The data come from the RNA Mapping Database (RMDB), library OK2TST. Structure probing data (DMS and 2A3) for a 177-nucleotide construct. The reactions ran in a buffer of 150 mM KOAc, 10 mM MgCl2 and 150 mM bicine (pH 8.5), at 24 C. DMS adducts were read by reverse transcription with MarathonRT. In probing experiments dimethyl sulfate is read out at A N1 and C N3, which are open when not base-paired. For DMS, 4,982 sequencing reads were counted. For 2A3 the reverse transcriptase was SuperScript II with manganese.
RNA sequence: GGGAACGACUCGAGUAGAGUCGAAAAAUGUGGCAGACCAUCGACGAUCACACGGGCAAGCCGAAGGCGCUCGUGCAGAUCAGCGCGGAUUCGAACGGCGAGCUGUCGGGCAAGGUCGUCAAGGGCACAUCACCUUUUACUUCGGUAAAAGGUGAUGAAAAGAAACAACAACAACAAC
Reactivity to DMS in 0.01 (KOAc 150mM, MgCl2 10mM, bicine 150mM(pH8.5), 24C), signal-to-noise 5, nucleotides 027 to 126: a070u000g020u010g010g020c050a110g000a170c040c030a080u000c120g010a050c040g010a020u000c000a200c060a110c020g000g000g000c020a060a300g000c000c010g010a050a080g050g010c100g000c130u000c050g010u010g000c060a070g000a070u000c120a090g010c030g010c040g000g000a100u000u000c100g000a100a160c060g000g010c000g010a260g020c020u000g000u010c020g020g010g020c200a120a080g000g000u000c010g000u000c040a090a100g000g010g000c090a160
Reactivity to 2A3 in 0.01 (KOAc 150mM, MgCl2 10mM, bicine 150mM(pH8.5), 24C), signal-to-noise 4, nucleotides 027 to 126: a000u120g010u070g080g020c050a010g040a130c020c010a060u070c070g010a020c010g010a010u010c010a010c010a010c120g000g000g000c030a060a060g020c000c020g050a060a050g110g000c010g010c020u030c050g020u020g000c040a050g040a200u100c030a030g000c070g000c010g060g000a060u090u090c030g030a090a060c010g040g000c000g000a010g000c030u120g150u300c010g020g010g020c090a150a110g000g010u000c000g000u010c000a020a060g030g010g000c020a020